This 207-nucleotide RNA was probed chemically with 2A3 and DMS. For 2A3 the reverse transcriptase was SuperScript II with manganese. The DMS profile rests on 2,458 reads. DMS adducts were read by reverse transcription with MarathonRT. The RNA was probed in 150 mM KOAc, 10 mM MgCl2 and 150 mM bicine (pH 8.5) at 24 C. Source: RMDB library RNAMAK, as collected in RNAgym.

RNA sequence: GGGAACGACUCGAGUAGAGUCGAAAAGGGGUCUCCGUUUGACGGACUUGACAUGCUCCCAUACUGAAGCCUCCACGGUAUGGCGAGCAACAGCAAGUCCCGAGGAGACGGAGGCACCCAAAACAGAUAACAUGCCUUUCGAGGCAUGUUAUCUGAAUACUCUACUCAGUUUCGACUGAGUAGAGUAAAAAGAAACAACAACAACAAC
Reactivity to 2A3 in 0.01 (KOAc 150mM, MgCl2 10mM, bicine 150mM(pH8.5), 24C), signal-to-noise 3, nucleotides 027 to 156: g020g000g000g020u010c000u010c010c000g010u060u110u110g060a040c020g000g000a010c010u010u000g040a080c020a180u140g000c000u000c000c000c000a000u000a010c000u010g080a190a080g060c020c040u060c080c010a060c010g030g010u000a000u020g030g000c240g030a000g010c000a050a030c050a020g030c000a000a000g000u020c010c010c020g030a050g060g050a030g000a000c000g000g000a000g020g000c010a230c000c000c010a040a060a010a000c010a000g000a000u010a000a000c020a010u000g000c010c000u050u090u220c300g050a010g010g000c000a000u000g000u000u000a000u000c000u000g000a000a000
Reactivity to DMS in 0.01 (KOAc 150mM, MgCl2 10mM, bicine 150mM(pH8.5), 24C), signal-to-noise 1, nucleotides 027 to 156: g000g010g000g030u020c010u000c010c030g020u000u000u000g010a150c220g000g020a050c000u000u000g000a130c050a300u000g030c000u000c000c000c000a020u010a030c000u010g020a030a210g020c060c010u000c030c010a300c020g030g000u010a040u000g020g000c150g000a010g040c000a050a050c110a090g000c020a000a050g000u000c000c000c000g040a210g030g000a080g000a020c010g000g010a040g060g030c000a040c000c000c000a040a090a140a260c010a010g000a020u000a010a020c000a020u010g000c000c010u010u010u010c300g010a060g010g000c020a000u000g010u000u010a010u010c010u000g000a070a130